[RMDB]
Source information: This 177-nucleotide RNA was probed chemically with DMS and 2A3. Source: RMDB library OK2TST, as collected in RNAgym. Conditions: 150 mM KOAc, 10 mM MgCl2 and 150 mM bicine (pH 8.5), 24 C. For 2A3 the reverse transcriptase was SuperScript II with manganese.
RNA sequence: GGGAACGACUCGAGUAGAGUCGAAAAGAGGAGACCAACGUGACAGUCACUGAGGCCAUGGAUGCCGAUGAGAUCUUCACCACCGGCACCGCCGUUGUGGUGUCCGCCGUCGGCAGCCUUACUCACACAAAUUCCGUUGAUUCGUCAACGGAAUUUGAAAAGAAACAACAACAACAAC
Reactivity to DMS in 0.01 (KOAc 150mM, MgCl2 10mM, bicine 150mM(pH8.5), 24C), signal-to-noise 5, nucleotides 027 to 126: g020a050g010g000a110g010a030c030c010a020a270c170g000u000g020a120c210a130g000u010c030a030c060u000g010a300g010g010c050c080a100u010g010g000a040u000g000c000c000g000a020u000g010a090g000a070u010c040u000u000c010a030c010c010a020c030c030g010g000c000a130c220c230g000c020c040g000u010u020g020u000g020g010u000g010u000c040c070g000c070c020g010u000c000g010g010c020a010g000c010c010u000u020a090c020u000c040a070c200a120
Reactivity to 2A3 in 0.01 (KOAc 150mM, MgCl2 10mM, bicine 150mM(pH8.5), 24C), signal-to-noise 4, nucleotides 027 to 126: g080a020g040g040a080g030a120c020c000a030a020c050g050u040g070a060c080a150g120u130c020a010c050u030g010a010g030g050c040c020a060u100g010g010a000u020g010c010c020g010a000u000g090a120g030a110u060c040u020u050c040a000c000c000a000c000c000g030g000c090a230c300c270g000c000c010g060u130u240g000u010g020g000u010g000u010c020c060g030c020c010g000u000c000g000g000c010a000g000c000c000u010u080a030c010u020c010a020c010a000